Structure probing data (DMS and 2A3) for a 177-nucleotide construct. For DMS the reverse transcriptase was MarathonRT. For DMS, 3,617 sequencing reads were counted. For 2A3 the reverse transcriptase was SuperScript II with manganese. It was measured as part of the RMDB library OK1LIB.

RNA sequence: GGGAACGACUCGAGUAGAGUCGAAAACGGGCAUGGUCUCAGGUAUUUCGGAGGUCUCAAGCACCGGAUUGAUGACCACACCGCGUCGGCGGGCGGUCAUUGCGCGGUCCGCGGCGCAAUCGUAGACAUUGCCUCUAAGGUUCGCCUUAGAGGCAAUAAAAGAAACAACAACAACAAC
Reactivity to DMS in 0.01 (KOAc 150mM, MgCl2 10mM, bicine 150mM(pH8.5), 24C), signal-to-noise 2, nucleotides 027 to 126: c040g000g000g030c040a090u010g000g000u000c000u030c070a080g000g000u000a070u010u010u030c000g020g020a190g020g030u010c040u020c160a090a180g000c000a110c000c000g010g000a070u010u000g000a020u070g010a020c000c020a020c160a300c040c060g020c000g000u010c070g010g040c000g020g000g000c090g000g000u000c010a180u010u030g000c040g020c010g020g000u000c000c010g010c020g000g030c000g000c050a040a020u010c100g000u020a030g010a160c140
Reactivity to 2A3 in 0.01 (KOAc 150mM, MgCl2 10mM, bicine 150mM(pH8.5), 24C), signal-to-noise 4, nucleotides 027 to 126: c030g010g040g030c050a070u060g010g040u000c010u000c020a040g080g040u170a130u040u150u050c070g070g020a070g070g060u060c040u050c140a070a040g040c060a100c000c000g000g000a000u010u120g020a040u120g010a040c010c030a060c020a050c040c030g010c010g020u040c040g220g090c000g000g000g000c060g050g030u040c030a070u100u280g000c300g000c040g100g010u050c000c000g010c020g020g000c000g000c010a000a080u170c050g010u020a020g020a040c050